[RMDB]
An RNA of 177 nucleotides, treated with 2A3 and DMS and read out base by base. For 2A3 the reverse transcriptase was SuperScript II with manganese.
RNA sequence: GGGAACGACUCGAGUAGAGUCGAAAAAGUACUGCCUUACGAGGCAGUACAUAACAAAUGGCCAUUUUACGGUCAAGGCUGACUGUUGCCUGAAGAAGAGGUAAAGCACGGUCUACGGACCGUGCAACCUACCGGAAUCCUUCGGGAUUCCGGUAGGAAAAGAAACAACAACAACAAC
Reactivity to 2A3 in 0.01 (KOAc 150mM, MgCl2 10mM, bicine 150mM(pH8.5), 24C), signal-to-noise 3, nucleotides 027 to 126: a000g000u000a000c000u010g000c000c000u130u030a180c300g030a040g000g000c000a000g030u000a000c000a010u070a030a020c020a000a070a090u050g030g040c030c030a130u160u110u060u290a100c110g000g000u030c010a010a010g050g000c060u120g050a070c030u080g090u250u080g000c000c030u080g080a100a070g020a060a010g040a010g130g030u120a130a000a000g000c000a000c000g000g000u000c010u050a050c270g050g000a000c000c000g010u010g000c000a000a000
Reactivity to DMS in 0.01 (KOAc 150mM, MgCl2 10mM, bicine 150mM(pH8.5), 24C), signal-to-noise 2, nucleotides 027 to 126: a090g000u000a010c000u000g000c000c000u000u000a120c120g000a000g000g000c000a000g010u000a000c000a030u040a130a160c090a040a060a120u050g000g000c000c030a120u060u020u000u070a080c160g000g010u010c010a000a050g000g010c040u000g000a160c080u000g030u000u000g000c000c000u000g020a090a110g030a100a060g000a140g020g000u000a080a140a100g000c000a010c000g000g000u000c000u000a100c220g040g000a000c000c020g000u020g000c000a000a000

The DMS profile rests on 2,684 reads. Values cover nucleotides 27 to 126.